[RMDB]
RNA sequence: GGGAACGACUCGAGUAGAGUCGAAAAUAGGUGGUGGUCUUCAGAAUCAGGUUGUUGAUAGCUUCAUCGUUCGGUGCCUCAGAGCCAUUGCCGUGAUAAAUAUUGCCAACCUUUCGUUUACUGAACGUGGUCUAGCUUAUUUCGAUAAGCUAGACCAAAAAGAAACAACAACAACAAC
Reactivity to DMS in 0.01 (KOAc 150mM, MgCl2 10mM, bicine 150mM(pH8.5), 24C), signal-to-noise 2, nucleotides 027 to 126: u000a060g010g010u000g020g010u000g010g020u010c030u000u010c090a120g010a130a090u010c120a080g000g000u010u010g010u020u000g010a070u010a100g000c080u000u000c050a060u000c040g010u000u000c070g020g000u010g020c100c040u000c060a080g000a100g010c030c070a040u000u010g000c050c030g010u000g020a090u000a030a090a100u000a060u010u000g000c050c020a050a060c040c030u000u000u000c060g000u000u000u010a120c070u000g010a030a060c180g000